[RMDB]
Structure probing data (DMS and 2A3) for a 177-nucleotide construct. For DMS the reverse transcriptase was MarathonRT. The data come from the RNA Mapping Database (RMDB), library 15KREP. 2A3 adducts were read by reverse transcription with SuperScript II with manganese. For DMS, 4,317 sequencing reads were counted. For 2A3, 2,923 sequencing reads were counted. The RNA was probed in 150 mM KOAc, 10 mM MgCl2 and 150 mM bicine (pH 8.5) at 24 C.
RNA sequence: GGGAACGACUCGAGUAGAGUCGAAAACUGAGUGGGGUAACAUGUUAACGGGCAUUGCUGCACGUCCUCCACCAGGUGAACAGUUUAAGCACCUCGUGCCUCUUAUGCAUAAGGGGGCUGCGUGGCCCCUGGUAUAAGCCUUCGGGCUUAUACCAGGAAAAGAAACAACAACAACAAC
Reactivity to DMS in 0.01 (KOAc 150mM, MgCl2 10mM, bicine 150mM(pH8.5), 24C), signal-to-noise 4, nucleotides 027 to 126: c020u000g000a160g030u000g000g010g020g000u000a100a080c180a080u010g010u000u020a120a060c080g010g000g020c040a090u000u010g000c200u000g020c020a020c010g000u020c160c000u000c010c010a030c020c010a060g010g000u000g010a090a130c140a080g000u000u000u010a080a090g020c100a090c030c000u000c040g030u000g000c000c030u000c050u000u000a050u000g020c190a120u010a060a050g000g000g000g000g010c010u000g010c060g010u000g000g010c080c050
Reactivity to 2A3 in 0.01 (KOAc 150mM, MgCl2 10mM, bicine 150mM(pH8.5), 24C), signal-to-noise 3, nucleotides 027 to 126: c010u030g020a020g080u010g010g000g000g050u070a090a060c040a130u120g050u180u190a050a020c010g000g000g040c040a030u020u300g070c080u080g000c030a010c000g030u030c000c010u000c000c010a030c010c010a000g000g030u070g040a090a050c040a110g010u060u070u230a100a010g030c020a030c040c000u020c010g000u020g030c010c000u020c000u050u130a140u200g100c060a060u070a180a040g000g010g000g010g010c040u060g000c000g000u020g000g010c010c010